[RMDB]
RNA sequence: GGGAACGACUCGAGUAGAGUCGAAAAACACCAAAACUGAAAACGGAAGGCAAUCCUUCCACCACGAUACUUACUUUCCUUUGAUCGUCGUUACUACUGGCAUAGCCACAAAGGAGAACAAACAUGAGCGCGGACACUGACUUCGGUCAGUGUCCAAGAUGUAGCAUAGGUUCGCCUAUGCUACAUCAAAAGAAACAACAACAACAAC
Reactivity to DMS in 0.01 (KOAc 150mM, MgCl2 10mM, bicine 150mM(pH8.5), 24C), signal-to-noise 2, nucleotides 027 to 156: a040c050a210c070c010a020a050a140a280c120u000g000a040a060a080a070c110g000g030a020a040g050g090c140a190a150u020c020c010u000u000c010c010a060c050c060a060c030g000a110u020a050c070u010u020a050c060u010u000u000c000c000u010u000u000g010a100u020c050g010u000c080g010u000u000a040c030u000a150c080u000g030g020c120a150u000a070g030c000c000a100c010a040a030a100g010g010a060g000a060a130c060a090a090a110c070a090u000g010a080g040c070g010c080g010g020a020c020a010c000u010g020a010c020u010u030c300g080g010u000c020a010g020u020g040u000c000c000a010a030
Reactivity to 2A3 in 0.01 (KOAc 150mM, MgCl2 10mM, bicine 150mM(pH8.5), 24C), signal-to-noise 9, nucleotides 027 to 156: a000c080a100c020c030a060a090a030a050c140u180g080a050a050a040a040c090g010g010a000a010g020g000c140a050a190u290c000c000u000u020c000c000a010c020c000a050c050g080a070u110a150c040u130u050a030c010u050u150u040c010c010u030u010u050g050a100u110c040g060u010c020g050u120u100a100c080u040a050c030u040g010g000c050a180u090a140g010c020c000a030c020a010a020a000g050g010a010g030a030a030c080a080a070a020c030a100u170g060a070g100c110g000c080g040g000a000c000a000c000u000g010a000c000u010u040c130g030g000u010c000a000g000u000g010u010c000c000a000a000
About this RNA
The record gives the reactivity of an RNA of 207 nucleotides to DMS and 2A3. Reactivities are given for positions 27 through 156. For DMS the reverse transcriptase was MarathonRT. For DMS, 3,256 sequencing reads were counted.